[RMDB]
RNA sequence: GGGAACGACUCGAGUAGAGUCGAAAAGCAACUUAGGAUUUUAGGCUCCCCGUGCGUGUCUCGAACCAUGCCGGGCCAAACCCACGGGGGCUGGCGGUCCCCGUGCGCUCAAAAUCAAACCGCUGGAAAAACAGUUCUAGCUUCGGCUAGAACUGAACUCCAGUAGACUCUUCGGAGUCUACUGGAGAAAAGAAACAACAACAACAAC
Reactivity to 2A3 in 0.01 (KOAc 150mM, MgCl2 10mM, bicine 150mM(pH8.5), 24C), signal-to-noise 1, nucleotides 027 to 156: g020c040a000a180c050u180u210a150g020g060a220u160u120u010u140a060g030g000c040u110c030c000c010c050g010u180g050c040g020u050g020u040c120u050c290g090a090a060c050c000a000u050g030c000c010g040g000g000c000c000a080a060a010c000c000c000a000c000g000g000g000g030g000c010u000g000g000c010g010g030u000c000c000c020c000g000u010g010c030g050c010u130c030a110a120a020a020u060c000a020a170a200c000c000g010c010u000g040g020a100a080a040a010a000c010a000g000u000u000c000u000a020g020c020u070u070c180g050g000c000u000a000g000a000a000c000u000g000a000a000